[RMDB]
RNA sequence: GGGAACGACUCGAGUAGAGUCGAAAAGACCACGAGGAAUACCAAGUGGAACUAAGGACAUCAAGAGGGGAGAGGAUUACAUGCGUUGGCAGUAUAAUCACUUGAAUACAACUCCAUAUCUUCAUCCAUCCAAAGAAUUAUGUUCAAUGUACAAUGGUACAUAUCAAACAUUCGUGUUUGAUAUGUAAAAAGAAACAACAACAACAAC
Reactivity to DMS in 0.01 (KOAc 150mM, MgCl2 10mM, bicine 150mM(pH8.5), 24C), signal-to-noise 5, nucleotides 027 to 156: g020a180c020c020a080c040g020a300g020g010a180a110u000a100c060c040a080a290g020u000g020g000a070a120c070u000a140a140g020g010a070c040a110u000c070a070a120g020a100g000g020g020g010a150g010a090g000g010a080u000u000a070c070a090u000g020c060g020u000u010g020g000c070a110g030u000a080u000a070a060u000c060a070c080u000u000g010a100a090u000a080c040a030a100c010u000c010c020a070u000a090u000c030u010u000c030a100u000c030c010a090u000c000c080a070a090a080g020a050a040u000u000a060u000g000u010u000c030a030a100u000g020u010a060c090a060a090u020g000g040
Reactivity to 2A3 in 0.01 (KOAc 150mM, MgCl2 10mM, bicine 150mM(pH8.5), 24C), signal-to-noise 9, nucleotides 027 to 156: g040a020c010c020a010c030g020a060g050g090a140a140u140a290c020c020a070a020g030u030g030g020a010a000c000u060a070a100g030g010a010c010a050u060c090a110a010g010a070g050g040g020g010a030g000a000g020g010a010u030u090a060c040a060u110g020c040g040u040u060g070g000c030a030g050u070a040u090a170a080u100c040a030c100u040u120g040a070a040u120a070c030a030a030c020u000c040c010a010u030a040u100c030u050u030c010a110u000c030c010a040u010c030c000a060a090a040g070a050a080u190u100a070u090g020u020u040c030a070a040u100g020u080a060c080a080a060u080g060g010